[RMDB]
RNA sequence: GGGAACGACUCGAGUAGAGUCGAAAAGAUAUGGAUUAGCAGGAACUACUUCCACCCUCGGAAACGAGGGUUGGAAGCUAGUGCUAAUCCUAAGUCAAAGGGUCAUUUUCUUCGGAAAAUGACCCAACUGAAAAAUUAGGUUCGCCUAAUUUUUCAGAAAAGAAACAACAACAACAAC
Reactivity to DMS in 0.01 (KOAc 150mM, MgCl2 10mM, bicine 150mM(pH8.5), 24C), signal-to-noise 4, nucleotides 027 to 126: g000a040u000a300u000g000g010a020u000u000a010g010c000a130g020g010a150a220c040u000a060c000u000u000c000c000a030c000c000c010u000c000g030g000a110a070a130c000g010a010g000g000g030u000u000g010g010a010a000g020c190u000a050g010u000g010c000u000a000a000u000c000c000u000a010a080g010u000c020a060a120a130g000g000g010u000c000a010u000u000u000u000c000u000u000c230g020g000a020a010a000a000u000g000a000c000c010c010a000a030
Reactivity to 2A3 in 0.01 (KOAc 150mM, MgCl2 10mM, bicine 150mM(pH8.5), 24C), signal-to-noise 2, nucleotides 027 to 126: g010a000u070a040u150g000g010a010u000u010a010g000c010a030g170g190a190a140c060u070a040c000u060u010c010c000a000c010c000c010u000c010g030g020a140a040a040c000g010a000g000g000g000u010u000g010g000a010a000g000c010u000a000g000u000g000c000u000a000a000u000c000c000u010a110a020g060u020c020a050a100a140g020g010g000u000c010a000u000u030u000u000c020u070u150c220g100g000a000a010a000a010u000g000a000c020c010c000a000a010